An RNA of 177 nucleotides, treated with DMS and 2A3 and read out base by base.
Source: RMDB libraries RFM100 and RFMREP, as collected in RNAgym.
[RMDB]
RNA sequence: GGGAACGACUCGAGUAGAGUCGAAAAGUAAGUAGUAAGAUAAAUAAUUCGCCUACUUGUUUGAAAAUGCCUCACCGUUUUCCGAAUGUUGUAUGUUUAUUCAGAAACAUCCAGACAUGGUCCGGCCAAAUUUCCUAAGUUUCGACUUAGGAAAUUUAAAAGAAACAACAACAACAAC
Reactivity to DMS in 0.01 (KOAc 150mM, MgCl2 10mM, bicine 150mM(pH8.5), 24C), signal-to-noise 6, nucleotides 027 to 126: g000u010a000a030g000u000a020g000u020a100a160g000a060u000a090a120a160u020a140a160u020u000c050g000c300c000u000a020c010u000u000g010u010u010u000g010a100a060a130a100u020g000c010c020u010c100a060c070c010g010u010u000u000u010c010c030g000a070a080u010g010u000u000g010u000a060u000g000u000u000u020a140u020u020c130a090g010a080a040a030c070a020u010c030c040a050g010a040c170a040u010g010g010u000c060c030g020g010c100c110
Reactivity to 2A3 in 0.01 (KOAc 150mM, MgCl2 10mM, bicine 150mM(pH8.5), 24C), signal-to-noise 4, nucleotides 027 to 126: g040u040a020a000g000u020a010g020u060a220a050g030a080u140a070a250a090u260a110a180u080u040c020g030c000c000u000a000c000u020u040g060u070u050u110g090a080a080a030a040u070g010c010c010u010c000a020c010c010g010u020u010u110u030c000c010g080a100a080u020g010u010u040g040u030a090u010g020u020u030u040a180u110u160c060a010g170a010a060a000c000a000u030c030c010a020g040a140c020a030u060g010g000u010c020c010g000g020c010c010

The RNA was probed in 150 mM KOAc, 10 mM MgCl2 and 150 mM bicine (pH 8.5) at 24 C. 2A3 adducts were read by reverse transcription with SuperScript II with manganese. DMS adducts were read by reverse transcription with MarathonRT.